The record gives the reactivity of an RNA of 207 nucleotides to 2A3.
[RMDB]
RNA sequence: GGGAACGACUCGAGUAGAGUCGAAAACGUGCCAGUUCGCUGGCACGAAAAAAACCUUUGUGCAGCCCAUUGUCAGUUUCCCAGGCCCAUUGGGCCUGAAGGAAACUUGGAUUUAUGGGUAGCACUCUGGUAAAAAACGAGUGUUUCGACACUCGAACUUGACACUUAUGUUCGCAUAAGUGUCAAGAAAAGAAACAACAACAACAAC
Reactivity to 2A3 in 0.01 (KOAc 150mM, MgCl2 10mM, bicine 150mM(pH8.5), 24C), signal-to-noise 1, nucleotides 027 to 156: c010g010u000g000c040c020a030g030u120u160c270g050c180u020g000g040c000a000c010g020a000a000a000a000a000a010a000c000c000u000u010u000g000u010g010c130a140g030c040c030c010a000u010u010g030u020c010a000g000u000u010u000c000c020c010a010g030g010c030c030c070a300u280u300g040g000g020c000c000u060g030a100a040g000g010a000a010a000c000u010u080g020g000a010u010u250u180a000u030g000g000g000u000a030g000c000a000c000u000c000u000g000g020u020a060a120a030a030a000a000c020g000a000g000u000g080u070u200u190c150g130a040c000a000c000u000c000g000a030a030
High 2A3 reactivity points to a flexible backbone, as in loops and unpaired stretches. For 2A3, 1,122 sequencing reads were counted. The data come from the RNA Mapping Database (RMDB), library RNAMAK. 2A3 adducts were read by reverse transcription with SuperScript II with manganese. Values are in units of 0.01, from 0 to 300, in steps of 10.